An RNA of 177 nucleotides, treated with 2A3 and DMS and read out base by base.
For 2A3 the reverse transcriptase was SuperScript II with manganese.
For 2A3, 9,866 sequencing reads were counted.
Values cover nucleotides 27 to 126.
The reactions ran in a buffer of 150 mM KOAc, 10 mM MgCl2 and 150 mM bicine (pH 8.5), at 24 C.
RNA sequence: GGGAACGACUCGAGUAGAGUCGAAAAGGACCAUUGCCGGUGGCCUUCUUCAUCGGCGUGCUCGCUGGGGAGGAGCCCAUCGACCACACGCAAAAGAACGUGUUGCGCGAAGGCAAGUCGCUGCAUCCAUAGACAGGGAGUUCGCUCCCUGUCUAUGAAAAGAAACAACAACAACAAC
Reactivity to 2A3 in 0.01 (KOAc 150mM, MgCl2 10mM, bicine 150mM(pH8.5), 24C), signal-to-noise 5, nucleotides 027 to 126: g050g030a020c020c030a130u030u160g030c020c030g050g010u030g010g010c010c010u040u020c000u040u020c010a250u140c020g000g010c020g010u090g070c100u170c060g000c020u010g000g010g020g020a020g000g020a030g000c020c000c010a030u030c010g070a080c010c020a010c000a010c020g000c060a100a150a050a090g080a180a020c010g020u030g040u090u100g030c080g000c030g080a080a020g040g000c060a020a000g050u020c020g000c140u100g010c020a040u020c020
Reactivity to DMS in 0.01 (KOAc 150mM, MgCl2 10mM, bicine 150mM(pH8.5), 24C), signal-to-noise 7, nucleotides 027 to 126: g010g010a200c040c040a160u010u010g020c010c020g010g040u000g000g010c280c020u000u010c030u000u000c020a040u010c030g020g010c000g020u000g020c280u010c040g030c020u000g010g000g010g020a040g010g010a060g000c230c000c000a030u000c020g000a070c040c150a070c030a030c030g010c040a070a060a130a140g010a090a110c070g010u000g010u000u000g020c040g000c020g010a070a110g010g010c110a060a110g010u000c030g020c030u010g030c050a130u010c100